[RMDB]
RNA sequence: GGGAACGACUCGAGUAGAGUCGAAAACAACGUCUGCGACAUCUUCCCCUUGAAGAGGUUCUACCUGCUGGUGGGCGGCUGUCCCUACGAUGCCUCCAUGCGGUUCAUCACAUACACCACCUGCAGCAUCCUGUUACGCAAGUCCACCUGGGACAACUGCUGUCCUUUAGUUCGCUAAAGGACAGCAAAAAGAAACAACAACAACAAC
Reactivity to 2A3 in 0.01 (KOAc 150mM, MgCl2 10mM, bicine 150mM(pH8.5), 24C), signal-to-noise 1, nucleotides 027 to 156: c030a060a140c020g050u000c010u110g010c060g020a040c020a240u060c000u020u000c030c020c000c020u030u120g100a020a020g000a020g000g000u010u020c010u010a070c030c030u090g060c070u090g000g000u040g010g010g020c040g000g020c040u040g050u070c060c000c000u110a030c060g010a000u120g010c010c010u000c100c020a060u100g070c060g030g130u080u000c040a070u020c040a070c060a070u240a040c060a030c090c000a010c000c010u020g060c010a020g010c000a030u000c000c020u060g020u130u030a040c000g050c040a040a050g020u020c020c010a040c000c070u100g010g000g000a020c040a030a020c040

Description: This 207-nucleotide RNA was probed chemically with 2A3. The data come from the RNA Mapping Database (RMDB), library OK3TST. The 2A3 profile rests on 530 reads.